[RMDB]
RNA sequence: GGGAACGACUCGAGUAGAGUCGAAAAGGGUCACGAGCGAAGUAGUGGUUGGCGCGUUCGGUUUCUUUGACGAUGGUGCCGGACACCGGGUCCACCCAGAAUGUUCGCUGCGCCGCGUAAUAGCGGGCAUUUAUUUAGCAUUCGUGCUAAAUAAAUGAAAAGAAACAACAACAACAAC
Reactivity to 2A3 in 0.01 (KOAc 150mM, MgCl2 10mM, bicine 150mM(pH8.5), 24C), signal-to-noise 9, nucleotides 027 to 126: g070g010g020u070c040a010c090g050a020g020c020g030a050a010g040u190a020g030u100g090g030u050u060g030g000c050g010c020g070u020u020c020g000g030u050u240u070c040u110u120u180g090a070c070g070a090u170g030g030u040g000c000c000g000g010a010c020a020c040c050g120g020g010u020c020c010a020c010c020c010a020g140a070a100u200g020u050u030c020g000c040u070g010c040g040c010c010g000c010g010u040a070a060u030a100g010c020g000g000g000
Reactivity to DMS in 0.01 (KOAc 150mM, MgCl2 10mM, bicine 150mM(pH8.5), 24C), signal-to-noise 9, nucleotides 027 to 126: g010g010g010u010c050a140c090g010a060g010c030g010a040a070g020u010a080g020u000g010g010u000u000g010g010c080g020c070g000u000u000c030g010g010u000u000u000c030u010u000u010g020a110c190g010a080u010g010g020u000g010c010c020g010g000a040c020a060c120c150g010g010g010u010c020c040a070c030c010c020a090g000a100a090u010g010u000u000c030g010c040u000g010c060g010c010c010g000c010g010u000a080a100u010a170g010c010g000g000g000
This 177-nucleotide RNA was probed chemically with 2A3 and DMS. The DMS profile rests on 58,053 reads. DMS (dimethyl sulfate) methylates the pairing face of unpaired adenines and cytosines. The 2A3 profile rests on 19,781 reads. The RNA was probed in 150 mM KOAc, 10 mM MgCl2 and 150 mM bicine (pH 8.5) at 24 C.